[RMDB]
RNA sequence: GGGAACGACUCGAGUAGAGUCGAAAAGAUAUGGAAACCUUCACAGGGAGCGAGACUAUCGGAAACGAUAGUCUUCGCGAAGAACUGUGAGAGGUUUCCUAAGUCAAAUCACUCGUUCGCGAGUGAACGAUGUUACACUGUUCGCAGUGUAACAUCGAAAAGAAACAACAACAACAAC
Reactivity to DMS in 0.01 (KOAc 150mM, MgCl2 10mM, bicine 150mM(pH8.5), 24C), signal-to-noise 2, nucleotides 027 to 126: g020a010u000a300u000g010g000a000a010a020c000c000u010u000c000a020c010a010g030g010g010a070g000c010g020a050g000a000c000u000a010u000c000g030g020a090a110a220c010g010a010u000a010g010u000c000u000u020c000g010c010g000a060a150g000a130a300c020u010g000u000g000a060g000a030g030g010u010u000u000c000c000u010a030a100g000u000c040a120a060a130u010c000a000c010u000c010g020u000u010c170g030c010g000a010g050u000g000a010a060
Reactivity to 2A3 in 0.01 (KOAc 150mM, MgCl2 10mM, bicine 150mM(pH8.5), 24C), signal-to-noise 1, nucleotides 027 to 126: g010a040u060a030u140g000g000a020a000a010c000c000u050u000c020a020c020a020g100g000g000a070g030c000g010a000g000a010c000u000a020u000c000g050g080a010a120a070c020g010a000u000a000g000u000c000u010u030c000g000c000g010a010a020g050a010a000c000u010g010u070g040a100g070a000g060g000u000u020u000c000c000u000a050a010g010u000c040a020a050a160u070c020a000c000u000c000g060u120u080c300g000c000g120a000g010u020g000a040a030